[RMDB]
RNA sequence: GGGAACGACUCGAGUAGAGUCGAAAAAUUACGGGCGGCGCAGGUGGAGCUGCGAUCCCUCCGCCCAUCGCGUGCUCUCUCGGUGGCCCAGACGCUGCAUACGGACAGGCGGGCCACCUGCAACGAAGUUGUGACUGUUCUUCGGAACAGUCACAACAAAAGAAACAACAACAACAAC
Reactivity to DMS in 0.01 (KOAc 150mM, MgCl2 10mM, bicine 150mM(pH8.5), 24C), signal-to-noise 1, nucleotides 027 to 126: a100u000u000a070c170g020g000g000c010g010g000c170g010c130a040g000g020u000g040g000a120g010c010u000g050c000g090a150u010c040c040c000u010c010c000g000c010c000c010a000u000c050g000c050g050u000g000c040u000c180u000c180u000c110g010g010u000g000g000c000c000c000a120g020a140c090g010c030u000g000c000a190u010a120c300g000g030a170c020a020g010g000c130g000g000g000c010c000a000c000c000u000g010c050a100a060c080g020a100a080
Reactivity to 2A3 in 0.01 (KOAc 150mM, MgCl2 10mM, bicine 150mM(pH8.5), 24C), signal-to-noise 1, nucleotides 027 to 126: a020u190u120a110c070g020g000g020c020g030g000c030g020c000a000g000g050u110g060g060a130g050c000u000g000c060g010a040u010c000c000c010u000c010c030g000c010c010c010a020u060c030g040c040g010u040g000c010u070c010u020c000u040c140g000g030u020g000g010c000c080c000a010g050a060c160g020c130u020g020c020a150u290a300c110g070g100a090c020a020g050g010c000g000g000g000c000c000a000c010c000u020g000c000a010a020c000g050a090a030
Source information:
The data come from the RNA Mapping Database (RMDB), library M2PK90. An RNA of 177 nucleotides, treated with DMS and 2A3 and read out base by base. The DMS profile rests on 666 reads. Reactivities are rounded to 0.1 and cut off at 0 and 3. The 2A3 profile rests on 1,255 reads.